[RMDB]
An RNA of 207 nucleotides, treated with DMS and 2A3 and read out base by base. Values cover nucleotides 27 to 156. The reactions ran in a buffer of 150 mM KOAc, 10 mM MgCl2 and 150 mM bicine (pH 8.5), at 24 C.
RNA sequence: GGGAACGACUCGAGUAGAGUCGAAAAAGAGAGUACCUGCGAUUUUCGCCGUCUUCAGGAAUCUGUGAGUUCUGGUGUGCAAACGAAACCAGCGGUCUCGGUAAUCCAGGAUGAAUCAAACAAUCCGGAAUCAUUCCAUGUUCGAUUGUUCACCCGAAUACCCUCCAUAGUUCGCUAUGGAGGGUAUAAAAGAAACAACAACAACAAC
Reactivity to DMS in 0.01 (KOAc 150mM, MgCl2 10mM, bicine 150mM(pH8.5), 24C), signal-to-noise 2, nucleotides 027 to 156: a100g010a170g010a050g020u010a070c070c010u010g030c080g020a110u000u000u000u000c020g040c020c050g070u010c030u000u000c040a080g020g030a150a040u000c040u000g000u020g000a260g020u000u000c030u000g000g040u000g010u000g080c060a040a090a090c050g000a070a060a010c010c010a110g060c100g050g000u000c030u020c040g010g000u010a040a070u010c030c000a050g020g000a050u000g010a110a180u010c080a090a080a090c060a040a070u010c030c040g020g010a060a100u010c040a120u000u000c030c040a200u010g030u020u000c050g000a110u000u000g000u000u000c060a150c050c030c000g040a300
Reactivity to 2A3 in 0.01 (KOAc 150mM, MgCl2 10mM, bicine 150mM(pH8.5), 24C), signal-to-noise 1, nucleotides 027 to 156: a000g130a000g020a020g030u100a130c000c030u040g030c050g070a060u060u040u060u190c130g030c050c020g010u050c010u070u050c060a030g050g090a110a100u070c070u140g140u070g070a090g070u060u030c020u070g000g040u020g040u100g070c050a070a030a010c040g060a070a010a040c000c010a020g060c000g090g020u040c070u000c030g060g000u050a060a040u020c040c010a030g000g050a040u100g060a040a110u100c130a080a090a020c000a030a070u020c020c020g030g010a040a100u110c030a090u080u110c050c000a010u110g030u080u080c030g050a100u030u040g040u070u070c030a090c050c010c010g000a010